[RMDB]
RNA sequence: GGGAACGACUCGAGUAGAGUCGAAAAGAGCCCGACGCCUACGAGGCAGACCGUCGUAAAGCUCAGGCCGAUCGCGAGCGGUCUUACAGGAAAGUCAGCGGCUUAUCUCCGAUCCGUGAGAAACGUGACGAUCGGGACCGUGACAGGGAUCGUGAGACAUUCCUACGUAGUUCGCUACGUAGGAAUGAAAAGAAACAACAACAACAAC
Reactivity to 2A3 in 0.01 (KOAc 150mM, MgCl2 10mM, bicine 150mM(pH8.5), 24C), signal-to-noise 3, nucleotides 027 to 156: g030a010g010c000c000c000g000a010c020g160c010c020u080a100c130g060a100g110g000c030a010g010a030c040c000g050u110c010g050u130a040a150a070g010c010u010c090a070g130g010c030c020g020a050u060c040g000c020g100a050g030c020g000g000u000c000u010u060a090c030a030g090g000a060a110a030g030u040c040a020g040c040g090g000c000u050u090a080u060c020u000c000c000g020a040u000c010c070g140u100g070a130g070a090a100a000c020g020u070g040a020c020g020a070u110c050g000g000g020a030c000c040g020u030g060a050c020a080g030g000g020a010u010c020g070u200g090a010g000a010
Reactivity to DMS in 0.01 (KOAc 150mM, MgCl2 10mM, bicine 150mM(pH8.5), 24C), signal-to-noise 2, nucleotides 027 to 156: g000a110g030c040c030c020g040a020c020g010c000c000u000a110c050g000a120g000g020c030a090g010a070c110c030g000u020c030g060u010a060a140a060g010c030u000c160a160g030g000c030c000g010a110u020c010g000c010g000a110g010c000g040g000u000c000u000u000a090c040a120g020g010a040a040a090g000u000c020a130g000c050g000g000c000u020u010a090u000c010u000c000c000g000a030u000c030c000g000u000g040a170g010a060a060a060c010g010u000g020a150c090g010a150u010c050g030g010g020a130c100c000g000u000g020a200c040a130g040g020g000a050u000c020g020u000g000a100g030a180